[RMDB]
This 207-nucleotide RNA was probed chemically with 2A3 and DMS. Source: RMDB library RNAMAK, as collected in RNAgym. The reactions ran in a buffer of 150 mM KOAc, 10 mM MgCl2 and 150 mM bicine (pH 8.5), at 24 C. For 2A3, 13,011 sequencing reads were counted.
RNA sequence: GGGAACGACUCGAGUAGAGUCGAAAAUGAACGUUCGCGUUCAGAUAAUUCCUAAGUCGUGACCUUUGAUCGUACUCGGAGCUUGGACCUAUCGGAAACGAUAGCUAGCUCCGGUACGGGAGGUCACGAUAUGGACUGAUGACGGGUUCGCCCGUAAACAAUAGUUACUCUUCGGAGUAACUAUUGUAAAAGAAACAACAACAACAAC
Reactivity to 2A3 in 0.01 (KOAc 150mM, MgCl2 10mM, bicine 150mM(pH8.5), 24C), signal-to-noise 9, nucleotides 027 to 156: u080g010a020a010c020g020u080u080c250g020c010g110u030u010c020a000g010a020u270a080a170u130u040c010c010u030a110a060g020u000c000g000u000g000a000c000c010u120u130u110g120a140u170c010g000u010a020c110u050c270g010g000a000g000c020u080u190g090g080a190c040c000u000a000u000c010g040g060a140a050a040c010g000a000u000a000g010c000u010a000g000c000u000c000c000g000g000u000a000c000g000g010g000a000g000g000u000c000a000c000g000a000u000a010u010g020g010a030c060u100g080a090u190g060a090c010g050g010g000u060u080c120g110c030c000c000g030u050a150a180
Reactivity to DMS in 0.01 (KOAc 150mM, MgCl2 10mM, bicine 150mM(pH8.5), 24C), signal-to-noise 4, nucleotides 027 to 156: u000g000a010a000c000g030u000u000c290g040c040g030u000u000c000a030g010a170u010a060a160u000u000c010c010u000a100a300g010u000c010g030u000g010a020c000c000u000u010u000g000a150u000c010g020u000a030c020u000c020g080g000a040g020c010u000u000g050g010a160c290c010u000a020u000c000g020g000a200a130a290c010g000a040u000a010g010c010u000a030g010c000u000c010c000g020g000u010a010c020g020g000g000a010g020g010u000c000a000c020g010a010u000a080u000g000g020a160c130u000g020a150u000g000a120c010g000g010g020u000u010c140g040c000c000c000g000u010a030a100